[RMDB]
RNA sequence: GGGAACGACUCGAGUAGAGUCGAAAAGUUGCCCGAGAUGAGAUCACACAGAUGAGACACAAGGAGCGAUGUCUCAUCACUUGGUUUUCGACAAGUGACGAGUCGUUCCCAAAAUCGCUCCAAUGAAAACACGUACUAUCUUCGGAUAGUACGUGUUAAAAGAAACAACAACAACAAC
Reactivity to DMS in 0.01 (KOAc 150mM, MgCl2 10mM, bicine 150mM(pH8.5), 24C), signal-to-noise 2, nucleotides 027 to 126: g020u000u000g080c200c000c020g000a080g000a120u000g000a150g000a180u040c100a070c120a080c190a120g000a000u000g010a020g000a000c000a010c130a090a040g010g010a010g020c000g010a040u000g010u000c000u000c000a000u000c010a160c040u000u000g010g000u000u000u010u000c010g010a010c000a050a050g010u000g020a130c060g000a000g020u000c000g010u000u020c020c000c000a000a010a020a050u000c050g000c000u000c020c010a090a060u020g000a130a050
This 177-nucleotide RNA was probed chemically with DMS. The reactions ran in a buffer of 150 mM KOAc, 10 mM MgCl2 and 150 mM bicine (pH 8.5), at 24 C. DMS adducts were read by reverse transcription with MarathonRT. It was measured as part of the RMDB library M2PK90.